Record summary: Structure probing data (DMS and 2A3) for a 177-nucleotide construct.
RNA sequence: GGGAACGACUCGAGUAGAGUCGAAAAAGUUGAGUUAAAUUUAAAGGGUGUAAUUUGUUUUACAAUGAUGAAGAUAAUUAGUCUAUCAAAAGAAAGGGGUUGGGACUGUUAUGAGUGAUAAUUUGUCACUACGGAAUGAUUUCGAUCAUUCCGUAGUAAAAGAAACAACAACAACAAC
Reactivity to DMS in 0.01 (KOAc 150mM, MgCl2 10mM, bicine 150mM(pH8.5), 24C), signal-to-noise 4, nucleotides 027 to 126: a100g000u010u000g000a130g010u000u020a060a110a060u050u010u030a040a050a070g010g000g020u010g000u000a030a040u000u010u010g000u030u000u020u010a060c100a040a080u020g000a090u010g000a060a070g010a040u010a060a120u020u030a080g010u010c030u010a080u020c030a030a050a070a050g000a060a050a040g000g010g020g010u020u010g000g010g010a090c070u010g000u000u000a060u020g010a130g010u000g010a040u020a070a100u010u010u000g010u010c140
Reactivity to 2A3 in 0.01 (KOAc 150mM, MgCl2 10mM, bicine 150mM(pH8.5), 24C), signal-to-noise 3, nucleotides 027 to 126: a010g100u080u070g030a020g010u070u120a040a090a200u190u080u200a070a040a020g060g020g000u050g020u050a060a050u040u140u060g100u020u150u020u060a060c080a100a080u060g040a020u040g040a050a050g010a030u110a160a080u180u100a080g010u000c000u020a180u060c030a060a080a000a000g100a060a040a030g030g000g030g020u040u050g010g020g040a020c020u030g010u030u080a110u090g060a070g080u000g000a020u010a260a080u010u080u080g060u050c040
The RNA was probed in 150 mM KOAc, 10 mM MgCl2 and 150 mM bicine (pH 8.5) at 24 C.
For 2A3, 1,234 sequencing reads were counted.
For DMS the reverse transcriptase was MarathonRT.
Reactivities are rounded to 0.1 and cut off at 0 and 3.
It was measured as part of the RMDB library OK1LIB.